[RMDB]
RNA sequence: GGGAACGACUCGAGUAGAGUCGAAAAGAAAAGACGAUGUUAUUAUGAUUCUCGAGUAAUAGCAGGUCAAGCGUACUACUCGCCGAACGGAAGGCGGACUGUUCGCGAAAUGAAACGAGAAAGAAAAGGAUGAGUAAUGGUUCGCCAUUACUCAUCCAAAAGAAACAACAACAACAAC
Reactivity to 2A3 in 0.01 (KOAc 150mM, MgCl2 10mM, bicine 150mM(pH8.5), 24C), signal-to-noise 4, nucleotides 027 to 126: g100a020a110a000a010g050a010c030g060a170u020g000u030u000a000u010u020a050u040g120a200u070u000c020u000c010g000a010g010u010a010a020u000a000g010c020a010g090g000u070c100a110a040g000c000g000u020a010c010u010a010c000u030c030g000c030c010g050a130a110c100g130g080a090a100g010g000c000g000g030a020c030u010g000u000u030c020g000c020g030a000a020a150u260g030a050a000a040c020g000a010g040a010a070a000g090a020a100a000a010
Reactivity to DMS in 0.01 (KOAc 150mM, MgCl2 10mM, bicine 150mM(pH8.5), 24C), signal-to-noise 2, nucleotides 027 to 126: g010a090a200a220a270g000a010c010g000a140u010g000u000u030a010u000u000a040u010g000a050u020u000c000u010c000g060a300g000u000a000a000u000a020g000c000a010g000g050u000c090a180a040g040c040g020u000a010c040u000a170c050u010c040g030c020c010g050a110a170c140g060g020a040a150g020g000c030g020g000a070c080u010g020u010u010c010g000c050g010a100a060a140u040g010a040a120a160c040g040a000g040a010a030a110g050a050a040a090a090
The record gives the reactivity of an RNA of 177 nucleotides to 2A3 and DMS. For 2A3, 5,116 sequencing reads were counted. The DMS profile rests on 1,895 reads. The reactions ran in a buffer of 150 mM KOAc, 10 mM MgCl2 and 150 mM bicine (pH 8.5), at 24 C. DMS adducts were read by reverse transcription with MarathonRT. Values cover nucleotides 27 to 126.